Overview: An RNA of 207 nucleotides, treated with 2A3 and read out base by base. Source: RMDB library OK3TST, as collected in RNAgym. 2A3 adducts were read by reverse transcription with SuperScript II with manganese. The RNA was probed in 150 mM KOAc, 10 mM MgCl2 and 150 mM bicine (pH 8.5) at 24 C.
RNA sequence: GGGAACGACUCGAGUAGAGUCGAAAAUGCAUAUUCAAAGAGAAUACUUUGCAAGGGAGUGGGGUUGUGGGGGCCAAGUCCCCACUCAGCCACUUCCCUUGGGUCAUUAUCUUGGUUUCCCCACCUGUACAGUGGUGAUGGUGGUAGCGUGGGGGCACUCGUAGUAAUCGUUCGCGAUUACUACGAGAAAAGAAACAACAACAACAAC
Reactivity to 2A3 in 0.01 (KOAc 150mM, MgCl2 10mM, bicine 150mM(pH8.5), 24C), signal-to-noise 1, nucleotides 027 to 156: u070g000c020a030u040a080u180u120c020a220a030a000g030a000g010a090a020u080a140c030u010u070u300g120c010a020a000g010g000g050a000g020u010g000g040g040g020u190u150g040u030g000g010g000g000g000c000c030a110a000g040u070c000c000c000c020a010c000u000c000a020g050c010c000a030c000u120u110c000c000c010u010u000g010g000g040u030c010a060u010u190a070u070c010u000u030g090g010u050u160u120c000c000c020c000a010c000c000u030g030u100a040c040a100g030u030g070g140u080g040a070u090g060g100u020g070g030u120a020g020c060g050u040g000g000g000g000g000c000a000